[RMDB]
RNA sequence: GGGAACGACUCGAGUAGAGUCGAAAACAUGCGCGUAAGAACAGCCGCGUUCAUUCAGAGUCAAGAGCCCUUCUGGUUCGUUGAGUGAAUGUAGAAAUAUACAUCUUACGACUGAGCGUCGGCGCGGUCUAGGCUGCGGGUUCGCUCGUAGUCUAGAAAAAGAAACAACAACAACAAC
Reactivity to 2A3 in 0.01 (KOAc 150mM, MgCl2 10mM, bicine 150mM(pH8.5), 24C), signal-to-noise 1, nucleotides 027 to 126: c090a140u260g070c080g000c000g040u070a100a100g070a080a050c060a090g000c030c040g000c000g010u030u040c000a030u140u000c070a030g090a030g300u050c030a170a000g020a000g020c010c000c000u130u000c120u220g020g000u040u010c010g190u240u150g080a000g100u120g030a040a080u040g000u060a040g180a190a280a000u300a030u000a060c030a020u050c050u050u010a070c080g050a120c090u050g140a090g110c060g150u210c060g190g050c070g190c080g070g040